Chemical mapping of a 207-nucleotide RNA with 2A3.
[RMDB]
RNA sequence: GGGAACGACUCGAGUAGAGUCGAAAAGCCAGUCAGAGGGCGCUACCAUGCAAACUAGGGCUGGCUACUCUUGCACAGAAUCACCUUUCUAUAAUAACCGGUGCAAGAAGGGUUAUUAUACCAUUUAAAAAUCGUGAAUGCUUCGGCAUUCACGAAAUCCCAAUCCUAAGUUCGCUUAGGAUUGGGAAAAAGAAACAACAACAACAAC
Reactivity to 2A3 in 0.01 (KOAc 150mM, MgCl2 10mM, bicine 150mM(pH8.5), 24C), signal-to-noise 1, nucleotides 027 to 156: g000c000c000a000g030u010c000a000g000a010g090g000g000c000g000c030u200a210c080c120a180u300g020c000a030a030a030c000u030a030g010g000g010c000u000g000g000c000u000a000c000u000c000u010u000g000c000a010c000a010g080a050a030u070c030a150c060c030u180u140u090c070u140a000u000a000a000u000a000a000c000c030g020g000u010g010c000a000a000g000a020a040g080g000g000u000u000a010u030u030a010u030a020c030c030a040u110u220u300a040a040a100a080a030u030c000g000u000g030a000a050u000g000c000u000u030c040g100g010c000a000u000u000c000a000c000g000a000a000a000

The reactions ran in a buffer of 150 mM KOAc, 10 mM MgCl2 and 150 mM bicine (pH 8.5), at 24 C.